[RMDB]
This 177-nucleotide RNA was probed chemically with DMS and 2A3.

RNA sequence: GGGAACGACUCGAGUAGAGUCGAAAAGGCUCGGUGCGCACCCAUGCAUGCGCUUGAGCAGCUCGCGGACUACGGCUUUGCCUGGCGGGACAUCGCACGCGUUGUCGGAGUGAGCGUGCCCGCAAUCCGCAAGGAGAGCGUUCGCGCUCUCCUUGCGAAAAGAAACAACAACAACAAC
Reactivity to DMS in 0.01 (KOAc 150mM, MgCl2 10mM, bicine 150mM(pH8.5), 24C), signal-to-noise 2, nucleotides 027 to 126: g030g000c010u000c050g000g030u010g000c020g060c010a090c100c050c070a120u020g020c030a170u000g010c050g000c040u000u020g010a080g000c060a150g020c060u000c100g000c010g040g010a050c130u020a090c070g000g000c050u010u000u020g040c020c020u020g040g000c020g000g020g000a090c070a040u050c000g010c000a080c050g010c190g010u000u000g010u050c070g000g000a190g000u030g010a120g000c060g000u000g010c000c020c010g000c070a100a110u000c010
Reactivity to 2A3 in 0.01 (KOAc 150mM, MgCl2 10mM, bicine 150mM(pH8.5), 24C), signal-to-noise 3, nucleotides 027 to 126: g120g010c020u020c030g020g060u190g020c020g000c010a030c010c040c030a070u100g030c040a030u060g000c010g020c000u070u110g010a000g020c010a000g040c000u010c040g030c020g010g020a050c010u050a030c150g030g000c000u080u040u120g020c010c000u080g060g010c010g010g000g020a040c030a080u130c080g040c030a030c010g050c000g070u090u240g120u130c030g050g070a190g040u080g000a010g020c030g000u070g050c000c010c020g020c010a000a030u040c000